The record gives the reactivity of an RNA of 207 nucleotides to 2A3. For 2A3, 812 sequencing reads were counted. Values are in units of 0.01, from 0 to 300, in steps of 10. For 2A3 the reverse transcriptase was SuperScript II with manganese. It was measured as part of the RMDB library M2RFPK.
[RMDB]
RNA sequence: GGGAACGACUCGAGUAGAGUCGAAAACGAGGUGCGGUAGGCCUCGUUAACAAACCGCAAAAAAAUAGUCGCAAACGACGAAAACUACGCACUCGCAGCUAAAUAACCUGCGCUGAGCCCUUCUCCCAAAACUGAGGUAGGUUCGCCUACCUCAGAACCCGUAGCUAUUGUUCGCAAUAGCUACGGGAAAAGAAACAACAACAACAAC
Reactivity to 2A3 in 0.01 (KOAc 150mM, MgCl2 10mM, bicine 150mM(pH8.5), 24C), signal-to-noise 1, nucleotides 027 to 156: c030g000a010g010g000u050g000c040g020g060u050a050g050g020c000c000u010c000g050u010u040a010a030c010a000a060a010c020c000g030c000a080a000a040a000a000a000a180u200a040g000u040c040g010c060a080a160a070c060g040a000c000g060a020a010a010a010c070u140a030c010g020c040a020c020u030c020g000c010a030g010c040u110a090a110a140u070a130a130c000c000u030g020c010g000c150u030g030a010g030c000c000c000u110u060c050u030c000c050c000a100a110a070a130c000u000g000a000g000g000u000a000g010g020u000u030c040g070c020c010u020a010c000c000u000c000a000g000a000a000